[RMDB]
RNA sequence: GGGAACGACUCGAGUAGAGUCGAAAAAGGGUGUCAUUUAAAAGUGGGGAACCGAGCCUAGCAAAGCUUUGAGCUAGGAACGGAAUUUAUGAAGCUUACCAAAGAGAAAGUUUGUCUGUGGACGUUCUCUGAGGGAAUUUUAAAACACAAGACUACAGGAAUAGAAUAUGUUCGCAUAUUCUAUUCCAAAAGAAACAACAACAACAAC
Reactivity to DMS in 0.01 (KOAc 150mM, MgCl2 10mM, bicine 150mM(pH8.5), 24C), signal-to-noise 2, nucleotides 027 to 156: a040g000g000g020u010g010u000c020a070u010u000u010a020a110a100a100g020u010g000g000g000g050a090a240c030c040g000a070g000c000c010u000a040g000c010a020a120a110g000c010u010u000u000g000a300g000c000u000a010g020g020a030a030c040g000g010a080a040u000u000u000a010u000g000a050a030g000c030u000u030a070c010c020a040a290a060g030a010g000a040a030a000g010u000u010u000g010u010c000u000g040u010g000g000a040c010g020u000u000c000u000c010u000g000a300g010g000g000a050a020u000u000u000u000a010a000a020a080c020a040c010a030a140g020a040c020u000a070c120a150
Reactivity to 2A3 in 0.01 (KOAc 150mM, MgCl2 10mM, bicine 150mM(pH8.5), 24C), signal-to-noise 3, nucleotides 027 to 156: a010g040g010g010u050g020u050c050a070u070u140u300a090a130a010a010g030u040g010g010g000g010a010a010c020c010g010a000g010c000c000u000a000g000c010a000a000a010g000c010u010u010u010g000a000g010c000u000a000g000g010a010a010c000g010g050a030a020u160u160u040a020u060g020a010a000g000c000u020u300a020c000c000a000a000a010g000a000g000a010a030a000g000u000u000u000g000u010c010u000g000u000g000g000a000c000g000u000u000c000u000c000u000g000a010g000g000g010a000a000u020u020u020u040a010a000a000a010c000a000c000a010a150g010a010c000u010a030c030a020
Chemical mapping of a 207-nucleotide RNA with DMS and 2A3. 2A3 adducts were read by reverse transcription with SuperScript II with manganese. The DMS profile rests on 3,527 reads. DMS (dimethyl sulfate) methylates the pairing face of unpaired adenines and cytosines. The RNA was probed in 150 mM KOAc, 10 mM MgCl2 and 150 mM bicine (pH 8.5) at 24 C. DMS adducts were read by reverse transcription with MarathonRT.